[RMDB]
This 177-nucleotide RNA was probed chemically with DMS and 2A3. 2A3 adducts were read by reverse transcription with SuperScript II with manganese. The 2A3 profile rests on 1,487 reads.
RNA sequence: GGGAACGACUCGAGUAGAGUCGAAAACGGUCUUGGUCCUUGAACGGCUCUCCGAGGCCCGCCGCAACAACCACCCGGUCCUUGCGAUCGUCGCUGGAUCGGCGAUCAACCAAGACGGCGCAUCCAACACCCUAUCGAGCUUCGGCUCGAUAGGGUGAAAAGAAACAACAACAACAAC
Reactivity to DMS in 0.01 (KOAc 150mM, MgCl2 10mM, bicine 150mM(pH8.5), 24C), signal-to-noise 2, nucleotides 027 to 126: c130g050g000u000c040u010u020g010g000u030c100c060u000u000g000a070a110c280g000g000c180u020c100u000c060c050g010a070g050g020c010c000c020g020c090c050g050c070a090a120c210a190a150c110c070a100c180c090c000g000g020u000c000c020u020u030g010c170g000a180u030c030g010u000c000g010c090u010g000g000a010u000c000g020g000c020g000a060u030c120a160a100c190c060a040a010g040a110c000g030g020c030g010c130a100u000c000c000a060a160
Reactivity to 2A3 in 0.01 (KOAc 150mM, MgCl2 10mM, bicine 150mM(pH8.5), 24C), signal-to-noise 3, nucleotides 027 to 126: c040g010g010u030c040u040u140g110g020u080c020c040u060u080g070a090a020c040g010g000c020u040c000u000c090c040g000a080g030g000c000c030c000g000c030c020g010c020a080a130c030a030a060c090c040a030c070c020c000g060g000u040c000c010u080u170g000c050g050a040u130c030g160u100c010g050c030u110g050g000a090u050c000g000g000c010g010a030u110c040a050a030c070c040a070a010g080a000c030g010g040c050g000c020a050u030c010c030a000a040